[RMDB]
RNA sequence: GGGAACGACUCGAGUAGAGUCGAAAAGGGGUCUUAGUGGGUACUUGGAUUUAGCUAGCUUUUGACGAGCUGAAGCCUCCACGGCUCGAUAAGCUAGCUUGUCAGUACAGCUAAGACGGAGGCACCCAAAAGGACGGUUCGUUCGCGAACCGUCCAAGAACAUUGAGCGUUUCGACGCUCAAUGUUCAAAAGAAACAACAACAACAAC
Reactivity to 2A3 in 0.01 (KOAc 150mM, MgCl2 10mM, bicine 150mM(pH8.5), 24C), signal-to-noise 1, nucleotides 027 to 156: g130g000g010g010u060c000u000u000a010g000u030g070g300g000u020a020c040u200u250g110g050a070u300u300u000a000g000c000u000a000g000c000u100u080u030u280g200a140c030g000a000g020c000u030g010a080a040g070c050c030u010c000c000a040c030g000g000c000u000c020g010a010u000a100a040g000c000u000a000g000c000u000u000g000u000c000a010g000u000a000c000a000g000c000u000a000a030g000a010c040g000g020a050g000g010c020a030c010c000c000a000a260a000a000g000g000a000c000g010g000u010u050c020g000u040u050c170g040c040g100a000a000c030c000g000u000c000c000a000a000